[RMDB]
RNA sequence: GGGAACGACUCGAGUAGAGUCGAAAAUAUCGGGUUUUGUUAACUCUAUUUCAAGUCCAAAUCUAAGCAAUUUGGAGAAUAGAAACACAGUACAAAACAGUAGAAAUGCGGAUUCUGCUCCGUGCGAGGAUGCUGCCCAUUUCGAUGGGCAGCAUCCAAAAGAAACAACAACAACAAC
Reactivity to 2A3 in 0.01 (KOAc 150mM, MgCl2 10mM, bicine 150mM(pH8.5), 24C), signal-to-noise 1, nucleotides 027 to 126: u230a000u000c000g170g070g000u000u000u000u000g110u020u010a130a090c050u000c000u070a010u000u040u210c300a160a260g210u040c040c000a000a000a000u000c000u080a030a030g050c120a000a030u010u010u010g000g000a120g030a000a000u000a010g000a000a090a000c300a000c020a120g050u050a000c000a030a000a000a000c000a010g180u150a070g140a130a130a050u200g000c140g030g030a020u160u180c050u080g000c060u030c000c080g000u000g000c040g010a010
Annotation
Chemical mapping of a 177-nucleotide RNA with 2A3. The reactions ran in a buffer of 150 mM KOAc, 10 mM MgCl2 and 150 mM bicine (pH 8.5), at 24 C.